This 177-nucleotide RNA was probed chemically with DMS.

RNA sequence: GGGAACGACUCGAGUAGAGUCGAAAACUGGAUCAGGGUGUGCACGGCGACUCCGCCGGCGAGCAGGCCCAGGGCGGUCCGGAUCCAGGCCAGGAAUGUGCGCUCGUUGGCGAGGGUGAAUCGGUAACACUCCUACCCGGUUCGCCGGGUAGGAGUGAAAAGAAACAACAACAACAAC
Reactivity to DMS in 0.01 (KOAc 150mM, MgCl2 10mM, bicine 150mM(pH8.5), 24C), signal-to-noise 1, nucleotides 027 to 126: c050u000g010g020a060u040c080a100g020g030g010u000g000u000g020c060a180c050g000g010c150g000a060c030u000c100c010g010c000c020g000g000c030g010a030g040c030a160g000g030c040c030c060a060g000g030g020c100g040g000u030c030c040g030g000a050u000c050c010a160g020g000c000c030a080g000g030a070a160u000g000u010g000c080g000c010u000c030g000u000u000g000g000c010g000a070g050g010g000u000g060a060a110u010c030g000g000u030a100a210
The reactions ran in a buffer of 150 mM KOAc, 10 mM MgCl2 and 150 mM bicine (pH 8.5), at 24 C. The DMS profile rests on 998 reads.